[RMDB]
RNA sequence: GGGAACGACUCGAGUAGAGUCGAAAAGGCCUGGAGCCGUGCAUUGUAGGAGGUGGAGGGAAAGAGGCCAAGGAGCUGGUGAGAUGUGAUCCCUCCUGGGAGCAGGAUCUCCUGUGGGACAGACAAGACUUGCCUAUAAGUUCGCUUAUAGGCAAGUAAAAGAAACAACAACAACAAC
Reactivity to 2A3 in 0.01 (KOAc 150mM, MgCl2 10mM, bicine 150mM(pH8.5), 24C), signal-to-noise 4, nucleotides 027 to 126: g040g010c000c030u040g070g020a020g000c010c020g020u060g020c050a130u110u160g070u160a060g010g040a020g040g030u230g020g040a030g000g030g000a000a050a030g050a030g010g020c000c010a020a050g070g000a050g030c070u070g010g070u100g060a120g020a050u110g060u060g090a080u040c010c000c000u030c030c030u020g010g010g010a040g020c040a040g020g080a090u020c010u020c010c010u020g020u090g020g010g020a020c040a060g080a030c060a080a020g190
Reactivity to DMS in 0.01 (KOAc 150mM, MgCl2 10mM, bicine 150mM(pH8.5), 24C), signal-to-noise 9, nucleotides 027 to 126: g010g010c010c010u000g010g000a110g010c030c020g020u010g020c120a110u000u000g020u000a090g010g000a080g010g010u000g010g000a100g000g000g000a030a070a090g010a080g010g010c030c030a110a100g000g010a080g010c070u000g010g020u000g000a130g010a110u000g010u000g010a180u000c000c000c010u000c040c090u010g000g000g000a080g010c050a070g010g000a080u010c060u000c010c010u000g010u010g010g000g000a080c080a090g010a090c170a080a110g000

Overview: Source: RMDB library OK2TST, as collected in RNAgym. This 177-nucleotide RNA was probed chemically with 2A3 and DMS. For 2A3, 6,367 sequencing reads were counted. For 2A3 the reverse transcriptase was SuperScript II with manganese.